Chemical mapping of a 177-nucleotide RNA with 2A3. 2A3 adducts were read by reverse transcription with SuperScript II with manganese. Reactivities are rounded to 0.1 and cut off at 0 and 3. The data come from the RNA Mapping Database (RMDB), library OK1LIB. For 2A3, 782 sequencing reads were counted. Values cover nucleotides 27 to 126.
RNA sequence: GGGAACGACUCGAGUAGAGUCGAAAACAAUUGCUGCCGCAGCAGGAUGCUAAACGAAAGGAAUUGCCGGCGACCACCGCAGGCUCAGCGCCCGACUUUAGCCGCAGUCGGUCUGUCUUUUGGCCCAAGCGGAUUACGUGUUCGCACGUAAUCCGCUAAAAGAAACAACAACAACAAC
Reactivity to 2A3 in 0.01 (KOAc 150mM, MgCl2 10mM, bicine 150mM(pH8.5), 24C), signal-to-noise 2, nucleotides 027 to 126: c010a020a090u060u060g010c040u000g000c020c050g000c020a020g050c000a000g050g130a110u180g010c000u080a060a050a060c030g080a140a000a010g050g010a040a070u170u190g000c030c040g040g010c000g030a090c000c090a070c030c000g000c070a040g010g000c060u060c110a000g030c010g050c000c000c020g030a030c000u020u030u050a010g010c000c000g030c030a020g080u190c030g030g000u050c110u000g150u140c010u000u040u050u080g010g000c000c010c020a040